The record gives the reactivity of an RNA of 207 nucleotides to DMS and 2A3. The DMS profile rests on 2,182 reads. DMS adducts were read by reverse transcription with MarathonRT. The reactions ran in a buffer of 150 mM KOAc, 10 mM MgCl2 and 150 mM bicine (pH 8.5), at 24 C. For 2A3 the reverse transcriptase was SuperScript II with manganese.
RNA sequence: GGGAACGACUCGAGUAGAGUCGAAAAAGAAUUGUACCACCACUGCGUAUCCUAAACGGGCUCUGCAGUGGUUAUUCUUGUAAAGUACUAGGAGUGAAUAGUGGCCCGUAUUGCAGGCAUUACCAUUAAAAGGCAAUCCACUUCGGUGGAUUGCCAAGAGGAAUGUUAUCUUCGGAUAACAUUCCUCAAAAGAAACAACAACAACAAC
Reactivity to DMS in 0.01 (KOAc 150mM, MgCl2 10mM, bicine 150mM(pH8.5), 24C), signal-to-noise 1, nucleotides 027 to 156: a050g010a030a100u000u000g000u000a090c020c130a130c020c000a020c010u010g020c010g030u020a060u000c020c020u000a000a070a100c160g000g050g030c040u000c120u000g000c000a010g000u000g020g000u000u010a010u000u010c020u020u000g000u000a030a080a170g030u000a090c010u010a080g020g010a150g020u000g000a060a090u000a050g010u010g000g010c020c020c030g000u000a140u000u010g080c050a070g000g030c020a100u000u010a110c030c030a140u000u000a020a070a130a260g020g010c000a000a020u000c000c000a030c000u000u000c300g050g030u000g000g010a000u000u000g000c000c010a000a020
Reactivity to 2A3 in 0.01 (KOAc 150mM, MgCl2 10mM, bicine 150mM(pH8.5), 24C), signal-to-noise 1, nucleotides 027 to 156: a010g080a020a020u150u100g090u190a120c010c070a020c000c010a000c030u000g020c000g040u020a030u090c000c020u100a090a160a060c090g000g000g000c120u020c100u120g000c020a000g000u000g000g020u000u060a000u000u030c000u000u050g040u160a080a050a100g120u080a020c060u070a040g080g070a050g090u110g160a060a230u040a090g080u110g040g000c010c040c000g030u050a070u020u140g000c090a020g010g000c000a020u080u040a050c000c000a090u120u120a070a130a000a000g000g000c000a010a030u000c000c000a000c030u040u000c220g050g000u000g000g000a000u000u000g010c000c000a000a000